[RMDB]
RNA sequence: GGGAACGACUCGAGUAGAGUCGAAAAGUACCCUUGUUCGCAAGGGUACAAAGACAGAGUUCACUGUCAUAAAGAAGGUAACAUCUCAGUUACAAUAAGAGAAAAGCACCUACUUCGGUAGGUGCAACUGUAGUGCAUACUUCGGUAUGCACUACAGAAAAGAAACAACAACAACAAC
Reactivity to 2A3 in 0.01 (KOAc 150mM, MgCl2 10mM, bicine 150mM(pH8.5), 24C), signal-to-noise 4, nucleotides 027 to 126: g000u000a000c000c000c000u000u040g030u020u060c200g000c100a000a000g030g000g000u000a000c000a000a010a000g000a000c000a000g030a020g060u120u130c070a060c140u020g010u010c010a020u210a030a210a050g200a010a030g120g000u020a010a020c030a090u070c100u060c170a050g000u010u040a010c030a040a070u190a120a040g160a000g070a010a040a040a110g000c000a000c000c000u010a010c000u010u090c220g090g000u000a000g010g000u000g010c010a000a000
Reactivity to DMS in 0.01 (KOAc 150mM, MgCl2 10mM, bicine 150mM(pH8.5), 24C), signal-to-noise 3, nucleotides 027 to 126: g000u000a020c000c000c000u000u000g010u010u010c200g060c050a000a010g030g000g010u010a000c000a020a130a090g010a000c000a010g000a260g010u010u010c130a130c000u020g000u010c000a130u010a100a130a110g000a140a070g000g010u010a010a010c020a060u000c100u000c100a080g010u000u000a040c010a080a060u020a090a100g000a080g000a090a080a100a090g000c000a000c000c000u000a000c000u000u010c160g000g000u000a000g010g020u000g000c020a000a010